RNA sequence: GGGAACGACUCGAGUAGAGUCGAAAAUGCCGUCUGCUCCUCGUCGAGGUAGAUGUUGGUCCGCUUCAUACACCAUAUCAUACAUCACAAUGUGCGGCCCGGGCGGCACCGCGGCGGGCGGCGAUUCGUAAGGAUGAGGGUUCGCCCUCAUCCUUACAAAAGAAACAACAACAACAAC
Reactivity to DMS in 0.01 (KOAc 150mM, MgCl2 10mM, bicine 150mM(pH8.5), 24C), signal-to-noise 2, nucleotides 027 to 126: u010g010c020c010g030u000c010u010g050c020u000c030c020u000c040g000u000c110g010a030g000g020u020a080g000a080u010g020u000u020g080g000u000c010c020g010c040u020u000c120a100u020a110c270a120c060c010a050u000a060u000c050a060u000a100c150a120u000c200a070c200a090a130u000g020u000g010c140g010g020c080c050c160g010g010g000c020g020g000c130a030c030c000g060c040g000g020c020g010g030g010c000g000g000c000g000a070u000u000c110
Reactivity to 2A3 in 0.01 (KOAc 150mM, MgCl2 10mM, bicine 150mM(pH8.5), 24C), signal-to-noise 2, nucleotides 027 to 126: u100g010c010c000g040u030c000u000g000c000u010c020c020u020c010g300u050c130g080a010g000g000u040a120g050a110u120g090u170u220g000g010u050c020c010g020c030u140u190c090a080u060a120c040a020c040c020a030u080a040u300c000a030u000a200c030a070u050c070a050c030a250a050u030g020u050g070c020g010g000c000c040c030g050g020g020c000g000g010c040a010c020c020g070c000g000g000c000g000g010g000c010g010g000c000g020a040u110u130c060